[RMDB]
RNA sequence: GGGAACGACUCGAGUAGAGUCGAAAAGUGCCAGAGAAGUUGUAUAUUGGGCUACCAUCCAGUGAUGCAAUGGAGGCUUGUUAGGGUUGUCAGUUUUCCACAGGGUAGCAAUUAAAACUGUCUGAAAAAAACGAAACCACCUUCGGGUGGUUUCGAACACAUAAUAAGCGUUCGCGCUUAUUAUGUGAAAAGAAACAACAACAACAAC
Reactivity to 2A3 in 0.01 (KOAc 150mM, MgCl2 10mM, bicine 150mM(pH8.5), 24C), signal-to-noise 2, nucleotides 027 to 156: g040u050g020c030c030a020g010a000g010a300a020g010u000u030g030u040a050u000a050u130u100g020g010g020c010u040a010c010c000a020u100c020c010a060g000u110g120a040u050g010c000a030a010u010g000g010a010g050g020c050u100u080g100u080u150a110g030g020g000u010u010g020u010c000a000g000u010u030u290u060c040c010a060c010a050g070g010g000u000a010g010c050a070a050u130u090a050a000a010a000c000u000g000u000c010u010g030a070a060a030a000a000a000a010c020g000a000a000a000c000c000a000c010c010u040u030c110g060g000g000u000g000g000u000u000u000c000g000a000a000
Reactivity to DMS in 0.01 (KOAc 150mM, MgCl2 10mM, bicine 150mM(pH8.5), 24C), signal-to-noise 2, nucleotides 027 to 156: g020u000g030c040c030a140g010a140g000a160a150g010u000u000g000u000a070u010a110u000u000g020g020g020c000u000a110c060c040a160u010c040c030a120g000u000g020a120u000g020c040a070a070u000g000g010a160g040g000c030u000u000g000u010u000a140g030g020g020u010u000g000u000c020a050g020u000u000u010u000c010c020a130c100a240g010g000g030u000a030g020c020a040a160u000u000a050a030a080a030c010u010g000u000c020u000g000a000a020a070a110a070a060a240c000g000a010a020a020c000c010a020c010c010u000u020c300g070g060g040u000g000g010u000u000u000c000g000a020a100